[RMDB]
RNA sequence: GGGAACGACUCGAGUAGAGUCGAAAAGUUGACGUUUCGACGUCAACAAGCCGGGGUCAUGUGGGACAUGGCUACCACUGAAGCCUCCACGGUGGCGGGCCAACAGCCGUAACAUCAUGACGGAGGCACCCGUGAUACGACGCCUUCGGGCGUCGAAAGGAGAAGUCGUGUUCGCACGACUUCUCCUAAAAGAAACAACAACAACAAC
Reactivity to 2A3 in 0.01 (KOAc 150mM, MgCl2 10mM, bicine 150mM(pH8.5), 24C), signal-to-noise 1, nucleotides 027 to 156: g020u000u000g000a010c010g000u020u160u160c180g160a070c000g000u040c000a000a000c000a000a000g020c000c070g090g000g000g000u020c000a030u090g020u030g020g040g110a090c070a170u300g070g080c010u020a130c000c000a000c000u070g020a180a030g030c000c060u060c030c040a070c000g000g010u000g000g040c200g100g000g090c090c100a110a020c030a010g210c030c000g040u100a100a120c020a020u190c080a080u160g110a060c000g000g020a000g020g000c000a050c000c000c050g000u020g040a020u050a060c020g000a020c010g060c000c020u080u200c300g000g000g000c030g030u000c000g000a070a000